The data come from the RNA Mapping Database (RMDB), library OK2TRN.
The record gives the reactivity of an RNA of 177 nucleotides to 2A3 and DMS.
The DMS profile rests on 6,824 reads.
The reactions ran in a buffer of 150 mM KOAc, 10 mM MgCl2 and 150 mM bicine (pH 8.5), at 24 C.
2A3 adducts were read by reverse transcription with SuperScript II with manganese.
[RMDB]
RNA sequence: GGGAACGACUCGAGUAGAGUCGAAAAGUUCUGAAAACAGGACGAAGGCAACGGCGGUCAAUAUCUCGAAAACCGUGAUGUGCUGUCCGCCAUUGGCGGCAGCGACGCGCUCGACGGCUUGCGCCAAAGUCCAUUUAUACUUCGGUAUAAAUGGACUAAAAGAAACAACAACAACAAC
Reactivity to 2A3 in 0.01 (KOAc 150mM, MgCl2 10mM, bicine 150mM(pH8.5), 24C), signal-to-noise 7, nucleotides 027 to 126: g000u010u000c010u020g060a090a080a110a170c020a010g010g000a010c030g020a120a050g030g000c010a020a010c030g030g000c030g030g010u000c020a060a070u080a120u190c110u040c110g080a080a120a060a080c030c010g010u020g030a180u080g050u060g000c000u010g070u110c010c010g000c010c020a300u130u300g010g010c000g000g000c000a000g010c010g000a020c020g000c000g000c040u070c090g040a030c010g100g010c000u030u040g000c010g000c010c000a060a020
Reactivity to DMS in 0.01 (KOAc 150mM, MgCl2 10mM, bicine 150mM(pH8.5), 24C), signal-to-noise 6, nucleotides 027 to 126: g010u000u000c010u000g010a130a090a100a230c050a030g010g010a020c010g010a120a120g010g010c030a070a300c180g000g000c020g020g010u000c040a100a110u010a080u010c100u000c100g000a080a070a080a110c290c010g000u010g020a080u010g010u000g010c010u000g000u020c010c000g010c010c010a140u000u000g020g040c000g000g010c020a010g000c010g010a010c030g010c040g020c080u000c100g010a060c080g010g010c030u010u000g010c300g010c020c020a050a050